[RMDB]
RNA sequence: GGGAACGACUCGAGUAGAGUCGAAAAGCCUCCUCGCUUCCAUAGAAAGGGAACGGGGCAGAUCGCAAGUGCUACAACCGAGCGGUGGUAUCUGUCAAACUAAGCAGCCACUGCACAUCAAUUGACUAAACGAUGCCGAUCUUCGGAUCGGCAUCAAGUUAUACUUACUGUUCGCAGUAAGUAUAACAAAAGAAACAACAACAACAAC
Reactivity to 2A3 in 0.01 (KOAc 150mM, MgCl2 10mM, bicine 150mM(pH8.5), 24C), signal-to-noise 4, nucleotides 027 to 156: g030c000c010u010c000c010u010c000g040c080u000u010c000c000a050u090a250g210a110a160a060g050g000g010a000a000c000g000g020g000g000c010a010g010a040u040c020g000c040a000a030g020u030g000c020u140a200c070a150a090c080c060g140a050g030c000g020g000u020g000g000u010a040u040c020u010g050u070c060a090a110a120c090u130a160a010g000c000a000g000c010c000a010c000u010g020c020a030c000a050u200c050a080a210u160u200g110a110c040u180a050a090a040c120g010a000u000g000c000c010g000a000u000c000u050u050c150g060g000a000u000c000g000g000c000a000u000c000a000a000
Reactivity to DMS in 0.01 (KOAc 150mM, MgCl2 10mM, bicine 150mM(pH8.5), 24C), signal-to-noise 2, nucleotides 027 to 156: g030c000c050u000c000c000u000c000g000c030u000u010c000c010a120u000a300g010a200a250a180g010g010g010a010a020c030g010g010g000g030c040a010g010a110u000c080g000c060a100a080g020u010g000c020u000a110c040a100a220c040c030g010a150g010c030g030g040u000g020g040u000a040u000c040u030g010u020c060a120a110a180c130u020a100a100g040c020a160g000c000c010a010c020u010g080c020a060c040a140u000c060a090a140u020u000g020a150c060u010a000a080a100c100g020a010u020g000c000c000g000a020u000c010u000u010c300g050g010a010u000c010g000g000c010a000u000c000a000a050

Description
The record gives the reactivity of an RNA of 207 nucleotides to 2A3 and DMS. Source: RMDB library M2RFPK, as collected in RNAgym. For DMS the reverse transcriptase was MarathonRT.